[RMDB]
RNA sequence: GGGAACGACUCGAGUAGAGUCGAAAAAGAAAACUGGCUCUCCCUUAGCCAUCCGAGUGGACGUCUGUCCUCCUUCGGAUGCCCAGGUCGGACCGCGAGGAGGUGGAGAUGCCAUGCCGACCCGAAGGAUCAGAUAUGUGUUCGCACAUAUCUGAUCAAAAGAAACAACAACAACAAC
Reactivity to DMS in 0.01 (KOAc 150mM, MgCl2 10mM, bicine 150mM(pH8.5), 24C), signal-to-noise 3, nucleotides 027 to 126: a100g000a090a040a080a120c060u000g010g010c010u000c010u010c010c000c140u000u010a090g000c140c010a030u000c000c020g000a070g010u000g000g010a030c030g020u010c210u000g010u000c010c010u000c050c060u000u000c020g020g010a020u010g000c040c030c030a100g010g010u000c090g000g010a300c030c070g010c120g000a150g010g000a080g000g000u000g010g010a040g000a040u010g020c000c000a030u010g010c040c020g000a110c000c000c060g010a100a140g000
Reactivity to 2A3 in 0.01 (KOAc 150mM, MgCl2 10mM, bicine 150mM(pH8.5), 24C), signal-to-noise 3, nucleotides 027 to 126: a010g130a010a040a000a020c050u010g010g000c000u000c020u000c030c000c000u040u100a030g010c040c000a030u000c000c010g040a030g050u040g030g000a010c050g110u130c220u300g010u000c030c020u010c000c050u080u070c020g020g000a010u000g010c030c000c000a010g000g060u040c040g020g070a170c030c010g040c080g060a100g040g020a010g050g000u150g020g030a030g000a020u170g000c020c000a020u090g010c020c020g040a060c020c010c010g070a140a030g170
The record gives the reactivity of an RNA of 177 nucleotides to DMS and 2A3. As a SHAPE reagent, 2A3 marks flexible, mostly unpaired nucleotides at the ribose 2'-OH. Reactivities are given for positions 27 through 126. DMS adducts were read by reverse transcription with MarathonRT. The reactions ran in a buffer of 150 mM KOAc, 10 mM MgCl2 and 150 mM bicine (pH 8.5), at 24 C. For 2A3 the reverse transcriptase was SuperScript II with manganese.